The record gives the reactivity of an RNA of 207 nucleotides to 2A3 and DMS. Reactivities are rounded to 0.1 and cut off at 0 and 3. For DMS the reverse transcriptase was MarathonRT.

[RMDB]
RNA sequence: GGGAACGACUCGAGUAGAGUCGAAAAGUGGGCGGCAACGUGGUGGAAGUAAAAGUCUCGGCGCCGGAGGGCGCAGGUGUGGGUGACCUUGUAGAAAGAACCACAGAACUCGCACUUGUGGGUGGCGGCAAUGUCUUUAAUGAGGUGAACUUUGCGCCCAUCAAAGACUUUUCGAAGUCUUUGAUGGAAAAGAAACAACAACAACAAC
Reactivity to 2A3 in 0.01 (KOAc 150mM, MgCl2 10mM, bicine 150mM(pH8.5), 24C), signal-to-noise 3, nucleotides 027 to 156: g070u050g000g030g030c050g030g010c030a050a040c070g030u030g000g030u020g040g050a070a050g030u100a060a160a030a040g040u000c020u010c060g040g000c030g010c010c020g050g020a040g020g050g010c040g000c020a010g020g020u000g020u030g010g020g000u010g030a040c000c000u030u060g020u030a050g150a090a150a010g050a040a030c060c010a010c020a040g060a040a000c010u010c040g050c040a010c000u030u030g020u030g030g020g000u040g040g000c000g010g000c000a030a090u090g020u020c020u030u140u160a110a100u130g030a050g050g030u060g050a060a030c050u020u070u030g030c060g040c000
Reactivity to DMS in 0.01 (KOAc 150mM, MgCl2 10mM, bicine 150mM(pH8.5), 24C), signal-to-noise 1, nucleotides 027 to 156: g000u000g000g010g040c020g020g030c040a010a070c090g050u000g040g000u000g010g010a080a090g050u000a080a080a080a090g000u010c030u000c010g010g000c050g050c010c060g000g020a150g010g000g010c040g010c020a010g000g020u040g020u000g010g010g040u000g020a110c060c030u000u000g020u000a070g050a080a050a160g000a100a100c010c020a050c050a110g000a150a020c000u010c020g000c030a080c090u000u000g080u000g030g000g050u000g000g030c040g020g010c040a060a050u000g020u010c010u000u030u000a080a140u010g000a070g020g000u000g000a090a120c040u000u000u000g000c060g000c130
Reactivities are given for positions 27 through 156. 2A3 adducts were read by reverse transcription with SuperScript II with manganese. Conditions: 150 mM KOAc, 10 mM MgCl2 and 150 mM bicine (pH 8.5), 24 C.